Source information: Chemical mapping of a 177-nucleotide RNA with 2A3 and DMS. High DMS reactivity at an A or C suggests that its Watson-Crick edge is free. Conditions: 150 mM KOAc, 10 mM MgCl2 and 150 mM bicine (pH 8.5), 24 C. DMS adducts were read by reverse transcription with MarathonRT. For 2A3 the reverse transcriptase was SuperScript II with manganese.
[RMDB]
RNA sequence: GGGAACGACUCGAGUAGAGUCGAAAAGGUGUAUGUAAGUACACUGAUAUUGAUGUUAAUUCAGCUUUGAAUAUAUGUUUUGACAUACGCGAUAAUUGUUCAUUGGAGAAGUUCAUGUCUACUCCCAGUAGUUGAAUACGUUCGCGUAUUCAACUACAAAAGAAACAACAACAACAAC
Reactivity to 2A3 in 0.01 (KOAc 150mM, MgCl2 10mM, bicine 150mM(pH8.5), 24C), signal-to-noise 4, nucleotides 027 to 126: g000g000u000g010u010a010u010g080u110a060a140g020u000a010c000a010c000u020g010a010u030a050u150u100g020a020u010g010u060u040a050a030u030u010c020a010g060c060u070u050u080g040a060a010u050a010u010a020u120g070u060u100u090u100g090a050c030a040u100a030c050g020c020g150a030u070a140a100u170u040g000u050u010c030a030u020u040g060g070a090g010a090a010g030u000u030c030a010u040g020u000c020u010a040c010u030c010c000c000a010
Reactivity to DMS in 0.01 (KOAc 150mM, MgCl2 10mM, bicine 150mM(pH8.5), 24C), signal-to-noise 3, nucleotides 027 to 126: g000g000u000g000u000a000u010g000u020a100a120g020u000a000c000a000c000u010g010a120u010a080u020u000g020a040u000g000u010u020a130a080u000u010c010a070g010c100u000u010u000g000a040a050u010a080u010a050u000g000u000u010u010u010g020a050c050a050u010a030c150g020c080g010a060u000a080a090u010u000g010u000u000c010a070u000u010g020g000a160g010a060a050g010u010u000c120a030u000g010u000c020u010a110c120u000c010c010c100a110